[RMDB]
RNA sequence: GGGAACGACUCGAGUAGAGUCGAAAACGUUUCAGAUUCGUCUGAAACGAAAAAAGCGUACUACGUCUGAUGACCACACCCGCAGGUUUCCCAAAUAGGAAACUAGUGCGGUGUGCAAGGACGUAUCGCAAAAAACCGUAAGUUUCGACUUACGGAAGAGCAAAUUUCAGUUCGCUGAAAUUUGCUCAAAAGAAACAACAACAACAAC
Reactivity to 2A3 in 0.01 (KOAc 150mM, MgCl2 10mM, bicine 150mM(pH8.5), 24C), signal-to-noise 1, nucleotides 027 to 156: c020g000u000u000u000c000a000g000a040u020u180c130g120u030c110u000g000a020a000a000c010g070a100a000a000a000a000a000g010c030g030u130a060c090u000a000c040g000u000c000u020g090a140u190g040a140c050c040a000c050a010c010c110c000g080c020a040g070g000u010u000u000c110c040c030a230a300a000u240a060g000g000a000a030a000c000u070a070g210u020g170c150g000g020u000g020u000g010c010a100a150g000g010a000c010g000u000a050u130c010g000c000a000a000a000a000a050a050c010c000g000u000a000a000g000u000u050u220c210g050a030c000u010u000a000c010g000g000a000a000

An RNA of 207 nucleotides, treated with 2A3 and read out base by base. High 2A3 reactivity points to a flexible backbone, as in loops and unpaired stretches. The data come from the RNA Mapping Database (RMDB), library RNAMAK. The 2A3 profile rests on 691 reads.